This 177-nucleotide RNA was probed chemically with 2A3 and DMS. Reactivities are rounded to 0.1 and cut off at 0 and 3. The 2A3 profile rests on 15,566 reads. For DMS the reverse transcriptase was MarathonRT. The RNA was probed in 150 mM KOAc, 10 mM MgCl2 and 150 mM bicine (pH 8.5) at 24 C. Reactivities are given for positions 27 through 126.
[RMDB]
RNA sequence: GGGAACGACUCGAGUAGAGUCGAAAAUGCGAAACCAAGCUUGUCAUCAGUGUUCGCUGUGAAUGAUUACAUGAAUUUGGUUUUUCCCGAGAUGUCGGGUUAUGACUUUAUCACGAGGACAUUGCGAUGCUAAAAGUAGUUUCGACUACUUUUAGCAAAAAGAAACAACAACAACAAC
Reactivity to 2A3 in 0.01 (KOAc 150mM, MgCl2 10mM, bicine 150mM(pH8.5), 24C), signal-to-noise 9, nucleotides 027 to 126: u170g000c030g010a010a010a000c010c000a010a010g020c020u010u020g010u010c020a010u000c000a070g040u020g160u290u070c080g050c230u150g070u100g160a050a060u060g000a020u020u020a010c010a020u040g140a220a230u070u010u020g010g000u000u010u010u030u020c000c010c030g020a030g010a040u170g060u090c020g030g030g030u110u100a120u150g040a030c000u070u100u060a150u100c050a030c090g040a030g050g030a010c000a020u010u080g030c060g080a060
Reactivity to DMS in 0.01 (KOAc 150mM, MgCl2 10mM, bicine 150mM(pH8.5), 24C), signal-to-noise 9, nucleotides 027 to 126: u010g020c090g000a040a030a030c010c010a030a040g010c020u000u000g010u000c070a030u000c010a110g020u010g020u000u000c050g020c200u010g020u010g010a080a070u000g000a040u000u000a030c030a030u000g010a060a100u010u000u000g010g000u000u000u000u000u000c010c000c000g010a120g000a060u010g010u000c000g000g000g010u000u010a080u010g010a050c150u000u000u000a080u010c040a070c030g000a100g000g000a070c060a050u000u000g000c070g010a160